RNA sequence: GGGAACGACUCGAGUAGAGUCGAAAAGAGCCGACAGAGAAGUCGGGAAGCGACGAGAGAGAAUAGAACACAUUGGAAUUCGAGAUACUGUCACAAAAUGACAGACGUCGCCAUAUUCUCGGAGAAGCACCUGAUUUACGUUCGCGUAAAUCAGGUGAAAAGAAACAACAACAACAAC
Reactivity to 2A3 in 0.01 (KOAc 150mM, MgCl2 10mM, bicine 150mM(pH8.5), 24C), signal-to-noise 4, nucleotides 027 to 126: g050a000g080c010c030g000a020c040a010g270a010g080a300a030g020u010c010g000g000g040a010a040g010c000g010a030c030g000a010g010a000g010a000g030a170a020u080a070g170a250a030c070a000c010a200u150u220g110g080a090a060u060u020c030g010a040g000a100u060a140c000u000g000u000c000a000c020a050a100a040a030u100g010a000c010a020g030a110c030g010u020c010g000c000c000a050u100a030u060u030c020u010c030g040g060a070g020a100a020g030
Reactivity to DMS in 0.01 (KOAc 150mM, MgCl2 10mM, bicine 150mM(pH8.5), 24C), signal-to-noise 3, nucleotides 027 to 126: g010a050g010c000c010g010a000c010a060g000a130g000a070a120g020u000c010g060g020g010a130a150g030c010g030a030c000g000a300g020a080g000a300g010a060a050u000a160g020a130a130c070a150c080a100u060u040g000g010a080a130u040u000c050g000a110g020a150u020a080c000u000g020u010c000a000c150a110a060a040a270u000g000a000c020a000g000a150c020g000u000c010g000c000c120a040u020a040u040u000c000u000c020g000g000a180g000a110a090g000
An RNA of 177 nucleotides, treated with 2A3 and DMS and read out base by base. DMS adducts were read by reverse transcription with MarathonRT. The reactions ran in a buffer of 150 mM KOAc, 10 mM MgCl2 and 150 mM bicine (pH 8.5), at 24 C. It was measured as part of the RMDB library OK1LIB. The DMS profile rests on 2,985 reads.